[RMDB]
RNA sequence: GGGAACGACUCGAGUAGAGUCGAAAAAAAAGGGAUGGGCAUGAAGGUGAUUGAGAUCCCAACCGAUCCGGUGGUGGGGAUCAGCCUGGAAGCCUUGGAAAUGGCUUUGGAUCAAUGGCCGAUCAAAGUUAGAAAGUAUGUUCGCAUACUUUCUAACAAAAGAAACAACAACAACAAC
Reactivity to DMS in 0.01 (KOAc 150mM, MgCl2 10mM, bicine 150mM(pH8.5), 24C), signal-to-noise 9, nucleotides 027 to 126: a040a030a050a060g010g010g010a060u010g000g010g010c050a080u000g010a100a050g010g010u000g010a140u010u010g010a120g000a040u000c000c000c000a070a030c010c010g010a080u010c130c100g010g010u010g010g020u000g000g010g010g000a020u000c010a130g000c020c010u010g010g010a060a030g000c010c000u000u000g010g010a070a100a070u010g000g010c010u000u000u000g000g010a290u010c060a060a050u000g000g010c030c030g000a060u000c060a080a090a100
Reactivity to 2A3 in 0.01 (KOAc 150mM, MgCl2 10mM, bicine 150mM(pH8.5), 24C), signal-to-noise 4, nucleotides 027 to 126: a000a010a020a040g110g020g010a070u100g030g000g000c040a040u050g040a060a010g000g010u060g030a120u060u120g040a090g010a080u010c000c000c000a000a010c010c010g040a110u120c060c070g070g050u150g010g060u040g000g030g000g000a000u010c000a000g020c010c000u030g060g000a020a000g000c000c000u010u020g060g030a040a120a060u080g020g000c000u040u040u040g050g020a020u060c030a040a090u100g090g010c010c010g000a010u030c020a000a050a010
Source: RMDB library OK2TST, as collected in RNAgym. Chemical mapping of a 177-nucleotide RNA with DMS and 2A3. DMS (dimethyl sulfate) methylates the pairing face of unpaired adenines and cytosines. The DMS profile rests on 18,075 reads. Reactivities are rounded to 0.1 and cut off at 0 and 3. Conditions: 150 mM KOAc, 10 mM MgCl2 and 150 mM bicine (pH 8.5), 24 C.